Description
Chemical mapping of a 177-nucleotide RNA with 2A3 and DMS. The 2A3 profile rests on 2,402 reads. DMS adducts were read by reverse transcription with MarathonRT. For DMS, 6,692 sequencing reads were counted. The reactions ran in a buffer of 150 mM KOAc, 10 mM MgCl2 and 150 mM bicine (pH 8.5), at 24 C.
RNA sequence: GGGAACGACUCGAGUAGAGUCGAAAAGCUUUUUAAGGAGUUAUUAGGGGAAGACCGAGAGGCUGCCCAUGGUACCCUGGUCAGUGAUUCCAAUGAUUUUAUUAGUUUUUAAUUUGAGGUGAUUAUGCUUAUUAUCUUAUUUCGAUAAGAUAAUAAGAAAAGAAACAACAACAACAAC
Reactivity to 2A3 in 0.01 (KOAc 150mM, MgCl2 10mM, bicine 150mM(pH8.5), 24C), signal-to-noise 4, nucleotides 027 to 126: g020c020u170u050u070u100u150a050a070g080g020a080g060u100u120a060u040u110a120g090g020g000g040a040a060g020a080c010c010g020a050g000a020g110g000c050u050g020c010c020c000a010u080g000g000u040a040c000c020c000u010g020g010u030c020a040g030u010g100a060u070u000c060c020a020a060u110g040a080u030u150u030u090a130u070u090a040g040u030u040u000u050u150a150a170u090u090u140g090a080g000g060u080g050a070u070u190a040u240g000
Reactivity to DMS in 0.01 (KOAc 150mM, MgCl2 10mM, bicine 150mM(pH8.5), 24C), signal-to-noise 3, nucleotides 027 to 126: g010c010u000u020u010u020u040a090a090g000g010a080g000u030u000a010u010u000a120g000g010g000g010a120a030g010a150c030c020g010a170g010a140g010g010c040u000g000c030c000c010a030u010g000g010u000a020c050c010c000u010g000g010u000c050a060g010u000g010a120u000u010c020c010a040a120u010g000a060u010u010u010u020a050u010u020a090g000u020u010u020u010u010a040a090u010u010u010g010a110g000g020u020g000a100u010u010a050u050g000